[RMDB]
RNA sequence: GGGAACGACUCGAGUAGAGUCGAAAAUGUUUGUACCAUGCUGAAAUUUUCCAUGGUUAAUGAUUCAAAGGGUAUAAGAACAUACAAAGCCACUGGAUUAGAUUUUAAUUCAUUGUCUUCUAGUGAAAAACAUGCUUCAUUUCGAUGAAGCAUGUUUAAAAGAAACAACAACAACAAC
Reactivity to 2A3 in 0.01 (KOAc 150mM, MgCl2 10mM, bicine 150mM(pH8.5), 24C), signal-to-noise 1, nucleotides 027 to 126: u110g050u000u030u070g010u030a020c000c000a130u010g030c080u180g100a090a300a300u300u270u130u040c020c020a050u070g070g000u000u040a080a000u090g090a020u050u000c050a030a010a020g130g000g020u050a050u020a130a020g070a050a000c020a020u140a050c010a080a080a000g080c030c020a000c000u010g000g000a050u060u000a070g050a270u100u220u000u070a090a060u120u010c010a020u030u100g000u010c000u010u030c010u060a100g150u080g030a100a180
Reactivity to DMS in 0.01 (KOAc 150mM, MgCl2 10mM, bicine 150mM(pH8.5), 24C), signal-to-noise 3, nucleotides 027 to 126: u000g000u010u000u010g010u010a030c030c010a040u020g040c200u010g000a060a100a130u000u020u000u000c060c060a070u020g030g010u000u000a080a060u000g000a110u000u000c030a030a090a160g000g000g000u000a030u010a070a110g000a070a050c040a020u000a050c160a130a070a090g010c070c010a010c120u010g000g000a010u000u020a030g000a170u010u010u000u010a020a060u010u000c020a020u010u000g000u000c020u010u010c100u000a120g000u010g000a070a080